[RMDB]
RNA sequence: GGGAACGACUCGAGUAGAGUCGAAAAAGCUUCCCCCAAGAAGAACUGGGACGCUCUCAAGAAGGAGGAGAUUUCCCGAAAGCUGGAGACUCGCGGAAUUUCAUUCAAGAAGAAGGUAACGGAGAAAAGAGGACCGACUUCGGUCGGUCCAAAAGAAACAACAACAACAAC
Reactivity to 2A3 in 0.01 (KOAc 150mM, MgCl2 10mM, bicine 150mM(pH8.5), 24C), signal-to-noise 2, nucleotides 027 to 129: a010g020c040u000u060c000c030c020c000c040a040a010g010a030a000g020a040a030c070u100g000g020g000a040c090g040c000u060c000u000c030a030a100g040a040a040g050g010a020g020g000a000g000a000u050u040u010c000c000c000g030a110a080a000g030c060u000g070g000a090g000a060c000u000c000g010c000g020g000a010a020u060u100u130c090a090u080u060c020a060a030g040a000a010g000a000a030g060g000u080a050a000c070g030g000a020g020a010a100a000a020g010a040

The record gives the reactivity of an RNA of 170 nucleotides to 2A3.
Conditions: 150 mM KOAc, 10 mM MgCl2 and 150 mM bicine (pH 8.5), 24 C.
Values cover nucleotides 27 to 129.
The 2A3 profile rests on 2,828 reads.
Source: RMDB library 15KLIB, as collected in RNAgym.
2A3 adducts were read by reverse transcription with SuperScript II with manganese.